Structure probing data (DMS and 2A3) for a 177-nucleotide construct.
RNA sequence: GGGAACGACUCGAGUAGAGUCGAAAAUAUUGCCGUUUGACACAUUCGGCUGACUGGAGGAGGAGCACAUCCACAGCGACUACGUCAGCGAUGUGCACAUCUAGCUCGACUGGCACAUUGAGCAUACUCCAGGAUCAGCUUUCGAGCUGAUCCUGGAAAAAGAAACAACAACAACAAC
Reactivity to DMS in 0.01 (KOAc 150mM, MgCl2 10mM, bicine 150mM(pH8.5), 24C), signal-to-noise 2, nucleotides 027 to 126: u030a070u000u000g000c020c040g000u050u030u030g050a190c070a040c200a070u000u060c170g000g030c000u000g000a090c010u000g020g000a050g000g030a200g020g130a180g070c070a150c270a130u000c030c110a070c200a300g010c030g000a070c020u170a040c020g050u000c150a070g000c000g120a060u000g000u000g000c010a080c230a080u120c060u000a130g000c000u000c000g000a010c080u000g000g000c000a070c120a300u010u000g010a090g000c000a090u040a160c100
Reactivity to 2A3 in 0.01 (KOAc 150mM, MgCl2 10mM, bicine 150mM(pH8.5), 24C), signal-to-noise 2, nucleotides 027 to 126: u250a160u100u100g040c050c030g020u070u050u140g070a030c010a000c000a090u010u060c000g140g000c010u020g000a020c000u030g130g000a000g020g020a010g000g120a000g100c020a020c000a150u000c030c010a030c030a070g160c020g000a050c020u140a060c080g000u000c000a030g020c030g020a000u000g000u010g000c030a000c000a080u010c020u010a010g030c000u040c060g050a000c020u040g030g000c010a010c000a150u000u030g020a020g010c030a020u040a110c010
The 2A3 profile rests on 1,132 reads. It was measured as part of the RMDB library OK1LIB. The DMS profile rests on 1,191 reads. High 2A3 reactivity points to a flexible backbone, as in loops and unpaired stretches.